RNA sequence: GGGAACGACUCGAGUAGAGUCGAAAAUGUAGGAGAUCCAGCACAGUUGCCAGCUCCUAGGACUUUGUUGACUAGAGGCACAUUGGAACCAGAAAAUUUCAAUAGUGUCACUAGAUUGAUGUGUAACGAAGUCCCUGCUUCGGCAGGGACAAAAGAAACAACAACAACAAC
Reactivity to DMS in 0.01 (KOAc 150mM, MgCl2 10mM, bicine 150mM(pH8.5), 24C), signal-to-noise 2, nucleotides 027 to 129: u010g040u000a030g020g010a000g000a130u080c110c070a160g050c010a200c180a140g040u090u000g040c040c040a000g020c040u000c090c000u030a090g000g000a100c050u040u020u060g000u000u000g010a070c010u000a010g000a090g010g010c010a030c010a040u020u020g020g000a030a000c020c100a160g050a030a010a150a160u010u040u010c000a000a000u070a120g050u000g050u050c010a050c000u000a010g060a000u180u030g060a150u040g040u030g000u000a060a120c020g000a030a000
Reactivity to 2A3 in 0.01 (KOAc 150mM, MgCl2 10mM, bicine 150mM(pH8.5), 24C), signal-to-noise 1, nucleotides 027 to 129: u130g020u050a000g140g000a000g000a020u000c020c000a030g200c040a000c020a090g060u300u130g050c000c000a010g000c030u000c000c030u000a000g020g030a030c010u000u000u150g000u010u070g050a000c020u000a000g030a040g000g000c000a000c000a000u000u000g020g030a060a060c070c050a120g160a090a070a030a030u030u000u000c020a000a000u020a140g000u030g000u000c000a000c020u000a000g000a090u030u140g100a110u200g200u050g070u040a010a010c030g010a000a000